RNA sequence: GGGAACGACUCGAGUAGAGUCGAAAAUACGAACGCUCGCGGCGUGCUUAACACGUACAAGUCGAACGAUGAAGCCCAUCGGGAUGGAUCGCUGGCGAACGCGAGAGUCACACGUGGGCAAUAUGCCAAAAUAAUAAAUAUUCGUAUUUAUUAUUUUAAAAGAAACAACAACAACAAC
Reactivity to 2A3 in 0.01 (KOAc 150mM, MgCl2 10mM, bicine 150mM(pH8.5), 24C), signal-to-noise 5, nucleotides 027 to 126: u190a030c020g020a070a020c020g020c020u010c010g040c010g030g000c010g020u020g000c020u110u130a120a020c010a000c030g040u150a060c030a100a020g060u110c010g050a050a030c010g020a030u070g090a060a030g020c000c000c010a060u170c070g020g010g010a040u060g040g170a030u020c010g000c050u060g090g100c110g070a090a020c050g000c000g010a020g000a010g050u050c010a030c010a010c100g020u040g000g010g000c020a020a040u210a090u170g050c010c000
Reactivity to DMS in 0.01 (KOAc 150mM, MgCl2 10mM, bicine 150mM(pH8.5), 24C), signal-to-noise 5, nucleotides 027 to 126: u030a060c100g000a130a100c070g000c020u010c030g020c040g020g020c090g000u000g000c090u040u040a120a190c130a040c110g010u000a070c120a130a270g020u000c010g000a060a130c020g010a030u000g010a200a180g000c040c020c010a090u030c150g020g000g000a060u010g000g010a110u000c010g020c070u020g000g000c050g000a080a090c090g000c030g020a050g000a150g010u000c070a040c090a070c070g010u010g010g000g010c010a130a080u020a050u030g000c060c040
The record gives the reactivity of an RNA of 177 nucleotides to 2A3 and DMS. The reactions ran in a buffer of 150 mM KOAc, 10 mM MgCl2 and 150 mM bicine (pH 8.5), at 24 C. For 2A3, 5,139 sequencing reads were counted. DMS adducts were read by reverse transcription with MarathonRT. It was measured as part of the RMDB library OK1LIB.